[RMDB]
RNA sequence: GGGAACGACUCGAGUAGAGUCGAAAAGUGAGUAAGGUAUAGUUAAUCUGCCCUACACUGGGGGACAACACUUAGAAAUGAGUGCUAAUACCCCAUACUCCUACCUAACAUAAGUUAGGUAGGGAAAUCAUAAGGGGUUGUUCGCAACCCCUUAUGAAAAAGAAACAACAACAACAAC
Reactivity to DMS in 0.01 (KOAc 150mM, MgCl2 10mM, bicine 150mM(pH8.5), 24C), signal-to-noise 2, nucleotides 027 to 126: g000u000g010a150g020u000a020a050g000g010u000a050u000a070g010u000u000a080a150u000c110u000g010c000c010c020u010a060c040a120c210u000g010g000g010g000g000a110c130a090a060c000a000c010u000u000a010g000a100a100a140u000g000a000g010u000g010c030u000a100a080u000a210c000c000c000c000a100u010a050c160u000c000c000u000a000c000c000u000a000a010c000a170u000a070a140g010u000u000a010g000g010u000a000g000g010g000a040a060a080
Reactivity to 2A3 in 0.01 (KOAc 150mM, MgCl2 10mM, bicine 150mM(pH8.5), 24C), signal-to-noise 1, nucleotides 027 to 126: g130u090g100a050g010u030a040a020g020g020u120a090u180a210g080u080u170a100a080u070c020u030g040c000c010c020u030a020c020a000c040u060g000g000g000g020g000a000c000a020a000c010a030c010u030u000a000g060a010a110a040u050g010a010g030u010g000c010u030a060a000u040a090c000c010c010c000a000u030a010c050u010c000c000u000a000c000c000u000a010a010c010a080u300a300a110g010u010u000a000g000g000u000a000g010g000g000a000a010a030